[RMDB]
RNA sequence: GGGAACGACUCGAGUAGAGUCGAAAAGAAAGAAAGAAAGAAAUGGUAUCUUCAAACUUAGAUAGUCCAUCUUAGCCAUCUUUAGCUCCCGGUUUUUUUGGACUAUCCAAACAACAAAAUGCUUCAAGAUUCCGUGUCAGUUCGCUGACACGGAAUCAAAAGAAACAACAACAACAAC
Reactivity to 2A3 in 0.01 (KOAc 150mM, MgCl2 10mM, bicine 150mM(pH8.5), 24C), signal-to-noise 2, nucleotides 027 to 126: g120a120a040a000g080a100a090a000g060a110a100a020g160a030a100a040u170g080g020u080a070u040c040u130u080c070a120a300a290c080u030u020a100g000a000u010a000g000u000c020c020a050u020c040u000u040a010g090c010c000a090u140c060u050u100u000a050g090c020u060c000c040c000g000g090u000u000u000u000u000u000u000g000g000a000c000u000a000u000c000c070a100a050a140c050a070a000c020a020a120a100a300u180g000c040u120u040c020a050a010